[RMDB]
RNA sequence: GGGAACGACUCGAGUAGAGUCGAAAAGAGCUUUUUCUGCAGGCUGUAUUCCUUGUGGCACAUCAAAAAUUCUAGGAAGUACAGACACUAUCUUGCUAGGCAGUAAUUGUAUAGCAGGAAGUGAAAGUAAUGGAAAUGUGCCUUACCUGCAGCAAAAGCCUAUUUUACCGUUCGCGGUAAAAUAGGCAAAAGAAACAACAACAACAAC
Reactivity to 2A3 in 0.01 (KOAc 150mM, MgCl2 10mM, bicine 150mM(pH8.5), 24C), signal-to-noise 2, nucleotides 027 to 156: g060a000g050c010u000u120u020u070u040c000u000g000c020a010g010g000c030u070g100u200a090u030u090c010c000u030u150g090u060g010g040c000a000c000a010u060c090a050a070a090a040a110u160u020c020u080a060g180g070a110a030g060u020a000c020a030g100a010c000a000c000u130a300u210c010u000u000g000c000u020a020g040g020c010a020g030u240a190a110u160u030g020u000a040u000a010g020c000a000g020g000a020a000g000u010g010a050a040a010g050u050a020a020u070g040g030a010a020a000u010g000u000g000c000c000u000u000a040c000c000u000g000c000a000g000c000a010a010a010a010
Reactivity to DMS in 0.01 (KOAc 150mM, MgCl2 10mM, bicine 150mM(pH8.5), 24C), signal-to-noise 1, nucleotides 027 to 156: g060a170g030c010u000u000u000u000u010c010u010g000c020a010g010g000c040u000g070u000a060u010u010c050c040u000u000g000u010g000g000c040a040c020a050u030c060a110a090a100a040a110u000u000c030u010a150g040g010a050a120g030u000a040c050a040g010a300c010a040c030u000a090u000c020u000u000g010c010u000a060g010g000c030a070g040u000a060a200u000u000g020u000a000u000a010g020c030a040g010g010a050a020g000u010g010a030a120a300g000u000a050a060u000g000g000a000a020a300u000g010u010g000c020c000u000u000a060c040c010u000g000c030a060g000c140a010a010a060a140